Source information
An RNA of 177 nucleotides, treated with 2A3 and read out base by base. The 2A3 profile rests on 516 reads. Conditions: 150 mM KOAc, 10 mM MgCl2 and 150 mM bicine (pH 8.5), 24 C. For 2A3 the reverse transcriptase was SuperScript II with manganese.
RNA sequence: GGGAACGACUCGAGUAGAGUCGAAAAUCGUGGGUGAGCACGCAGAUCACCGUGCGCUCGUCGAUACCACCCGCCUCCGCCUGGGCAGCCAGAUAGCGGUGGGGCCAUGCGACGACGACGUCAUCGGGGUACGGCCUUUGUUCGCAAAGGCCGUACCAAAAGAAACAACAACAACAAC
Reactivity to 2A3 in 0.01 (KOAc 150mM, MgCl2 10mM, bicine 150mM(pH8.5), 24C), signal-to-noise 1, nucleotides 027 to 126: u140c000g000u000g030g060g030u060g130a040g130c010a000c050g000c110a000g030a110u080c100a070c100c040g000u000g020c000g010c120u000c000g040u000c030g030a000u030a040c000c050a000c000c020c000g240c000c000u010c010c010g050c000c000u000g000g030g030c030a170g070c000c000a000g090a140u140a030g000c000g000g050u000g000g000g090g000c000c000a120u190g020c050g020a010c000g010a010c040g010a000c000g010u070c040a000u150c000g020g000